RNA sequence: GGGAACGACUCGAGUAGAGUCGAAAACGGCGACUACCAGUGCUUGGCUGACGAUGGCAGUCGCCAUCCUCCCCAUGGCACCGUUCACAUCGAUGUCCAGUACAGCCCCAUCGUGUCCACCCAUCGGCCGAGGCUGGACUUUCGAGUCCAGCCUCGGAAAAGAAACAACAACAACAAC
Reactivity to 2A3 in 0.01 (KOAc 150mM, MgCl2 10mM, bicine 150mM(pH8.5), 24C), signal-to-noise 1, nucleotides 027 to 126: c050g000g000c000g020a000c000u000a000c000c000a030g020u150g140c080u120u110g050g050c070u050g020a010c010g050a050u010g020g000c000a000g000u000c020g000c000c000a000u000c000c000u000c020c000c000c000a050u030g070g000c000a010c040c010g010u110u100c040a070c010a070u080c040g110a060u050g050u050c000c030a060g040u050a140c030a040g030c000c000c000c000a080u070c060g010u030g040u010c030c000a050c030c010c000a020u130c020g000g000